[RMDB]
RNA sequence: GGGAACGACUCGAGUAGAGUCGAAAAGAAAAUACUACAAGACUAAUACUUGUAGGUUUGUAGAAUUAGAUGACCAAGGGCAUCAUUUAGACUCCUAUUUUGUCGUUAAGAGGCAUACUAUGGAGAAGACCACUAUACUUCGGUAUAGUGAAAAGAAACAACAACAACAAC
Reactivity to 2A3 in 0.01 (KOAc 150mM, MgCl2 10mM, bicine 150mM(pH8.5), 24C), signal-to-noise 9, nucleotides 027 to 129: g080a000a050a010a020u160a090c000u000a000c000a040a000g040a050c080u250a090a110u130a220c020u020u020g010u020a000g020g020u020u050u070g030u030a010g050a050a040u120u040a060g020a050u020g030a090c040c070a120a110g080g060g000c030a010u020c010a020u060u060u040a070g030a070c010u010c000c010u030a050u030u110u020u020g020u020c020g020u020u080a130a050g080a100g080g000c010a000u030a030c030u070a060u140g010g000a020g010a050a010g050a000c010
Reactivity to DMS in 0.01 (KOAc 150mM, MgCl2 10mM, bicine 150mM(pH8.5), 24C), signal-to-noise 9, nucleotides 027 to 129: g000a070a030a030a020u020a110c010u000a020c010a010a010g000a130c150u040a120a130u000a090c030u010u010g000u000a000g000g020u020u020u020g020u000a050g010a120a060u020u020a080g030a060u000g030a010c030c070a130a130g010g010g000c020a040u000c000a040u030u010u010a110g010a160c000u000c030c020u000a090u000u020u020u040g020u020c010g010u020u030a100a100g010a110g040g000c020a010u020a060c120u000a030u050g000g000a020g020a090a080g030a090c170